[RMDB]
RNA sequence: GGGAACGACUCGAGUAGAGUCGAAAAGAUAUGGACCACGGUGUAAACGCGAAGAACUCGGAAACGAGGGAGCGUGCAUUGGUCCUAAGUCAAAAGCAAUACUUCGAGUUCGCUCGAAGUAUUGCAACCUAAAGGAGUACUUCGGUACUCCUUUAGGAAAAGAAACAACAACAACAAC
Reactivity to DMS in 0.01 (KOAc 150mM, MgCl2 10mM, bicine 150mM(pH8.5), 24C), signal-to-noise 7, nucleotides 027 to 126: g000a040u010a300u000g010g010a020c000c000a060c300g010g010u000g020u010a050a120a030c000g030c000g000a060a150g000a080a170c000u000c010g010g000a080a060a120c010g000a020g000g000g000a060g010c000g040u000g000c020a030u000u000g010g000u000c000c000u000a020a070g000u010c050a070a050a090a120g000c000a010a010u000a010c000u000u000c000g010a020g010u000u010c190g010c000u000c000g010a000a000g000u000a000u000u000g010c000a020a040
Reactivity to 2A3 in 0.01 (KOAc 150mM, MgCl2 10mM, bicine 150mM(pH8.5), 24C), signal-to-noise 5, nucleotides 027 to 126: g020a020u080a050u140g000g000a000c020c020a070c290g090g000u040g020u070a290a300a050c010g040c010g170a300a050g020a070a020c000u010c000g010g010a100a050a050c020g000a010g020g020g010a010g000c000g000u020g030c000a020u010u100g000g000u000c000c000u010a130a030g070u040c040a020a030a040a120g000c000a000a010u000a010c000u000u020c000g000a010g040u040u120c210g090c110u000c000g000a000a000g000u000a000u000u000g000c000a000a000